[RMDB]
RNA sequence: GGGAACGACUCGAGUAGAGUCGAAAAUACGGCCAAAAUUUCAGUUUGAUUUUAUUGGACGUCGAUCAUUUUAAAAAUAUUAACGACCAACUUGGGCAUCAUAAGGGCGAUGAGGUUCUGAUUUUCCCAUAAUAUCAAGGUUCGCCUUGAUAUUAUGAAAAGAAACAACAACAACAAC
Reactivity to 2A3 in 0.01 (KOAc 150mM, MgCl2 10mM, bicine 150mM(pH8.5), 24C), signal-to-noise 8, nucleotides 027 to 126: u050a000c010g010g000c000c010a000a020a040a040u030u040u030c020a040g190u070u220u260g060a040u030u020u050u130a220u080u060g010g010a020c010g030u030c040g050a050u050c030a080u050u160u220u300a110a190a020a030a050u160a070u140u080a070a030c030g030a020c010c010a010a030c020u030u050g020g020g010c010a020u010c000a020u100a170a070g050g010g000c030g040a040u070g020a020g030g040u070u020c020u020g070a110u030u030u030u030c000c010
Reactivity to DMS in 0.01 (KOAc 150mM, MgCl2 10mM, bicine 150mM(pH8.5), 24C), signal-to-noise 9, nucleotides 027 to 126: u000a060c040g000g000c010c020a020a030a080a030u000u000u010c020a110g010u010u010u010g010a030u000u000u000u010a130u020u010g000g000a040c000g020u000c130g020a090u020c070a060u010u010u010u020a010a090a100a100a080u010a060u000u000a060a110c060g010a080c040c030a060a050c120u000u000g010g000g010c040a040u000c050a050u000a070a080g010g000g010c050g010a060u000g010a090g010g000u000u000c040u010g000a120u000u000u000u000c010c020
The data come from the RNA Mapping Database (RMDB), library OK2TST.
The record gives the reactivity of an RNA of 177 nucleotides to 2A3 and DMS.
For 2A3, 12,467 sequencing reads were counted.
Values are in units of 0.01, from 0 to 300, in steps of 10.
The RNA was probed in 150 mM KOAc, 10 mM MgCl2 and 150 mM bicine (pH 8.5) at 24 C.
2A3 adducts were read by reverse transcription with SuperScript II with manganese.